Chemical mapping of a 177-nucleotide RNA with DMS and 2A3.
Conditions: 150 mM KOAc, 10 mM MgCl2 and 150 mM bicine (pH 8.5), 24 C.

[RMDB]
RNA sequence: GGGAACGACUCGAGUAGAGUCGAAAAGAAUAGGAUGUACCUUCAUGUUGGAGUAUUCUUACUAUUGUCCUGAGUACCUCACGCCAGUACACUUAUGAGGGCAAGAGACGGAAUUAACCCUUGAGAACCGAUCAUUCUUUUUCGAAAGAAUGAUCGGAAAAGAAACAACAACAACAAC
Reactivity to DMS in 0.01 (KOAc 150mM, MgCl2 10mM, bicine 150mM(pH8.5), 24C), signal-to-noise 3, nucleotides 027 to 126: g010a110a080u000a050g000g010a100u000g000u010a070c120c020u000u000c040a060u010g000u010u000g000g000a080g010u000a050u000u000c020u010u000a260c030u000a030u000u020g040u000c010c010u000g030a190g020u010a030c030c010u000c090a060c140g000c090c070a110g010u000a030c050a090c130u000u020a040u010g020a070g010g000g020c040a030a030g010a050g020a090c180g000g000a050a040u000u000a150a080c020c010c000u000u000g000a100g010a140a160
Reactivity to 2A3 in 0.01 (KOAc 150mM, MgCl2 10mM, bicine 150mM(pH8.5), 24C), signal-to-noise 2, nucleotides 027 to 126: g090a020a050u160a110g070g040a050u070g030u100a090c020c030u020u030c050a080u120g140u190u200g020g020a010g050u050a070u040u000c010u050u010a010c000u010a040u050u090g000u020c010c010u020g010a030g040u010a040c010c030u020c020a050c060g040c040c000a030g040u060a030c050a010c030u080u170a060u300g140a050g020g050g000c020a030a000g010a010g000a060c090g000g020a020a020u040u060a050a040c010c010c000u040u060g080a100g060a110a030